Chemical mapping of a 177-nucleotide RNA with 2A3 and DMS. 2A3 adducts were read by reverse transcription with SuperScript II with manganese. The 2A3 profile rests on 1,041 reads.
RNA sequence: GGGAACGACUCGAGUAGAGUCGAAAACCAACCGCCUUCGGGCGGUUGGGAUGACAGUCGCGAGGAAAGUCCGGGCUGACUGUCCACCACAGAACCCGGCUUAAAUCUAUCGCUUCGGCGAUAGAAACUGAGAUCGGUAAUUCGUUACCGAUCUCAGAAAAGAAACAACAACAACAAC
Reactivity to 2A3 in 0.01 (KOAc 150mM, MgCl2 10mM, bicine 150mM(pH8.5), 24C), signal-to-noise 1, nucleotides 027 to 126: c040c000a030a010c010c010g070c020c000u070u100c260g060g030g000c000g030g000u020u040g000g000g010a010u090g000a000c010a000g050u010c000g050c090g100a060g040g240a300a040a020g130u040c030c000g000g000g000c060u080g030a020c000u000g040u000c020c010a060c020c000a050c010a010g080a070a040c000c000c000g000g000c010u100u150a090a190a080u000c000u000a010u000c000g040c000u040u040c210g150g000c000g000a000u010a000g000a010a010a010
Reactivity to DMS in 0.01 (KOAc 150mM, MgCl2 10mM, bicine 150mM(pH8.5), 24C), signal-to-noise 2, nucleotides 027 to 126: c000c000a000a010c000c000g010c000c000u000u010c240g030g030g010c000g000g000u010u010g020g000g010a040u000g000a040c030a020g010u000c010g020c110g010a210g030g020a120a070a020g040u020c000c030g000g020g010c010u000g010a000c000u000g000u000c030c110a180c070c040a130c110a100g000a120a120c040c030c000g010g010c060u000u000a080a130a140u000c000u000a000u000c000g020c000u000u000c230g020g020c000g010a000u000a010g000a000a060a110
For DMS, 1,086 sequencing reads were counted.